[RMDB]
RNA sequence: GGGAACGACUCGAGUAGAGUCGAAAAGAAGGUAUGAACGUUGGAAGGCGCUUCCGUGUGAGCGGAAUUCUUAGGAGUUGGCGGACGGAUGUGGCCGUCAUACCAAGAACGGGAUAACCGGAAGAAAGGGUAAAUGAUACUUCGGUAUCAUUUACCCAAAAGAAACAACAACAACAAC
Reactivity to DMS in 0.01 (KOAc 150mM, MgCl2 10mM, bicine 150mM(pH8.5), 24C), signal-to-noise 2, nucleotides 027 to 126: g010a110a050g000g000u000a000u000g000a030a020c070g050u010u030g000g010a090a040g000g020c030g000c020u020u010c000c000g040u010g000u020g000a240g040c010g000g010a030a030u000u000c030u020u050a150g100g000a050g010u000u000g000g010c000g000g000a030c000g000g010a000u030g000u030g000g060c000c000g010u000c000a000u000a020c060c020a080a050g000a100a070c050g000g000g030a150u070a090a110c000c000g000g010a040a070g030a090a150a060
Reactivity to 2A3 in 0.01 (KOAc 150mM, MgCl2 10mM, bicine 150mM(pH8.5), 24C), signal-to-noise 3, nucleotides 027 to 126: g110a030a020g080g000u070a070u190g050a060a030c080g020u140u100g060g120a110a000g050g000c000g000c000u000u010c010c040g080u140g020u020g150a050g080c090g010g130a050a060u030u000c000u000u090a090g040g030a050g000u030u080g070g000c010g020g010a030c000g050g050a070u120g060u050g170g000c000c000g000u010c000a050u000a000c000c000a010a010g020a050a000c060g010g040g020a030u090a150a060c020c010g020g070a030a010g060a020a130a030

An RNA of 177 nucleotides, treated with DMS and 2A3 and read out base by base.
Conditions: 150 mM KOAc, 10 mM MgCl2 and 150 mM bicine (pH 8.5), 24 C.
For 2A3, 1,588 sequencing reads were counted.
For DMS the reverse transcriptase was MarathonRT.
For 2A3 the reverse transcriptase was SuperScript II with manganese.